[RMDB]
RNA sequence: GGGAACGACUCGAGUAGAGUCGAAAACCUCGGACCUCCUCUGGAGGGGUUCACAUCCCCAACCCGCGGGCCGGCUACUCUUCUUUUCCUUUCCUCGUCUUCAUCGGUCAGCCUUCUGAGUUCCUCUGCAGCGGUAGGUUCGCCUACCGCAAAAGAAACAACAACAACAAC
Reactivity to DMS in 0.01 (KOAc 150mM, MgCl2 10mM, bicine 150mM(pH8.5), 24C), signal-to-noise 7, nucleotides 027 to 129: c060c010u030c110g000g000a030c050c040u010c040c010u040c110u020g030g020a120g010g000g010g020u000u040c080a070c170a160u040c010c020c030c030a120a100c030c030c030g000c080g040g020g000c040c020g060g020c080u040a040c040u030c060u020u000c000u020u010u040u040c030c050u020u020u020c040c010u040c010g020u070c050u020u030c070a090u030c000g010g060u060c060a090g070c030c010u030u030c070u010g010a150g040u000u000c000c000u000c050u020g040c080a150
Reactivity to 2A3 in 0.01 (KOAc 150mM, MgCl2 10mM, bicine 150mM(pH8.5), 24C), signal-to-noise 4, nucleotides 027 to 129: c010c000u000c010g040g010a030c000c000u020c000c000u110c060u130g000g070a050g050g020g000g010u060u070c040a070c040a120u080c030c000c000c000a030a060c010c010c020g010c010g000g020g010c020c000g020g000c000u050a050c010u010c000u050u040c000u030u030u020u050c010c000u030u070u050c020c000u030c020g060u020c050u050u010c030a080u030c010g010g020u010c010a030g010c020c000u050u040c030u030g060a070g050u010u000c020c000u000c000u050g020c000a050